[RMDB]
RNA sequence: GGGAACGACUCGAGUAGAGUCGAAAAGUCUACAGCAAUUGUGCCAGGGCCACUUAGAGUGUUUGAUAUCCGGAGAACUGCAGAUACAAUGAAGAGGAUGCAGGGCACAAAACUAAAGAAACUGUUGAAAAAUAGGCUAUCUUAUCUAGGUGGUGCAAUACUUCGUUUCAUUCGUGAAACGAAGUAUAAAAGAAACAACAACAACAAC
Reactivity to 2A3 in 0.01 (KOAc 150mM, MgCl2 10mM, bicine 150mM(pH8.5), 24C), signal-to-noise 3, nucleotides 027 to 156: g040u000c040u100a090c040a030g000c030a090a190u110u070g010u030g000c020c030a060g010g060g010c000c000a010c010u020u040a010g020a050g080u160g090u030u100u090g020a020u010a020u040c020c040g050g050a150g060a080a030c010u010g000c000a000g010a130u090a120c060a090a090u200g040a090a050g060a060g120g020a030u030g000c010a010g010g000g000c000a010c000a010a050a010a030c060u160a100a050a060g100a100a120a020c080u060g040u120u050g050a020a030a040a080a100u060a060g000g010c000u010a020u020c030u120u170a060u060c010u020a000g000g000u000g000g000u020g050c000a010
Reactivity to DMS in 0.01 (KOAc 150mM, MgCl2 10mM, bicine 150mM(pH8.5), 24C), signal-to-noise 2, nucleotides 027 to 156: g040u000c010u000a000c020a020g010c020a080a110u000u010g030u000g040c050c030a230g020g010g000c000c010a010c010u010u000a030g000a180g030u000g050u000u000u000g010a100u000a080u000c020c010g000g000a200g000a090a050c060u020g040c020a050g000a210u010a140c120a090a110u000g020a120a210g000a140g010g020a150u000g040c030a140g030g040g000c070a020c050a030a040a080a140c070u020a110a120a060g000a110a060a120c020u000g020u000u000g000a060a060a100a070a130u000a070g010g020c060u000a040u000c060u000u010a070u000c060u000a080g010g020u000g000g000u000g030c100a040

This 207-nucleotide RNA was probed chemically with 2A3 and DMS. For DMS, 2,140 sequencing reads were counted. For 2A3, 1,585 sequencing reads were counted. The data come from the RNA Mapping Database (RMDB), library OK3TST.